Source information:
An RNA of 177 nucleotides, treated with DMS and 2A3 and read out base by base. Values are in units of 0.01, from 0 to 300, in steps of 10. For 2A3, 1,756 sequencing reads were counted. The RNA was probed in 150 mM KOAc, 10 mM MgCl2 and 150 mM bicine (pH 8.5) at 24 C. 2A3 adducts were read by reverse transcription with SuperScript II with manganese. Reactivities are given for positions 27 through 126.

RNA sequence: GGGAACGACUCGAGUAGAGUCGAAAAACGGGCAGUGGCGAUGGCAACGCGGCAGCCGCAGGGUCGACUUCUUCGCAGCCGCAACAGACGGGGAACGGGCAAAGAGGGGAACUCGUUCUGUUGGAAGGCCCUAUACGGGUUUCGACCCGUAUAGGGCAAAAGAAACAACAACAACAAC
Reactivity to DMS in 0.01 (KOAc 150mM, MgCl2 10mM, bicine 150mM(pH8.5), 24C), signal-to-noise 1, nucleotides 027 to 126: a090c100g030g030g000c010a060g110u000g040g000c030g000a040u020g000g000c020a060a110c140g000c130g000g080c140a030g010c020c090g000c040a020g000g040g040u000c100g010a150c130u000u000c040u000u060c060g000c010a220g000c080c050g010c020a050a000c000a000g030a050c050g020g000g060g000a110a010c060g000g000g000c200a130a010a150g000a040g030g000g000g070a070a100c010u000c020g030u000u050c000u000g000u000u000g000g000a060a050g000
Reactivity to 2A3 in 0.01 (KOAc 150mM, MgCl2 10mM, bicine 150mM(pH8.5), 24C), signal-to-noise 3, nucleotides 027 to 126: a000c030g000g040g000c040a060g020u020g050g020c050g060a090u050g040g050c010a050a040c030g000c000g040g030c030a000g030c020c010g060c020a020g000g000g040u050c000g030a080c030u040u020c010u050u040c050g000c020a030g040c010c020g050c000a000a010c010a010g020a000c050g050g000g020g030a070a110c030g000g060g000c070a040a130a020g050a040g020g020g000g000a030a030c020u010c000g050u170u030c020u050g030u000u000g030g000a090a020g110